[RMDB]
RNA sequence: GGGAACGACUCGAGUAGAGUCGAAAAGAACUCACCAGCAAAUGUUUACGACAAGAUUCGACAUUUGCAAAUUACGUAGCGAUCUUCCAGAAUCAUGUCGAAACGUUCCCAAUCGCUACGCCCUAAAGGCAAGUUAGAAAUUCGUUUCUAACUUGCCAAAAGAAACAACAACAACAAC
Reactivity to DMS in 0.01 (KOAc 150mM, MgCl2 10mM, bicine 150mM(pH8.5), 24C), signal-to-noise 2, nucleotides 027 to 126: g030a140a240c120u020c050a070c120c110a210g030c030a020a040a050u000g000u000u000u010a230c040g000a050c020a090a070g000a020u010u000c010g000a040c070a020u000u000u000g010c030a060a090a080u000u000a040c030g020u000a030g000c010g000a010u000c100u000u000c140c090a090g010a000a010u000c040a070u010g030u000c030g000a070a060a220c030g010u000u000c000c000c000a040a040u000c000g010c000u000a010c020g000c000c010c010u000a030a080a070
Reactivity to 2A3 in 0.01 (KOAc 150mM, MgCl2 10mM, bicine 150mM(pH8.5), 24C), signal-to-noise 2, nucleotides 027 to 126: g030a040a050c040u040c090a100c070c040a000g020c030a000a020a070u060g020u100u070u070a040c020g000a010c050a080a060g000a070u010u020c010g000a010c040a060u030u040u040g000c000a000a070a000u110u050a010c020g000u000a010g030c000g000a010u030c070u180u010c140c050a030g020a010a010u040c060a050u070g030u030c040g090a200a100a060c020g000u000u000c000c010c000a000a010u020c010g010c010u000a000c020g030c020c000c010u070a030a010a000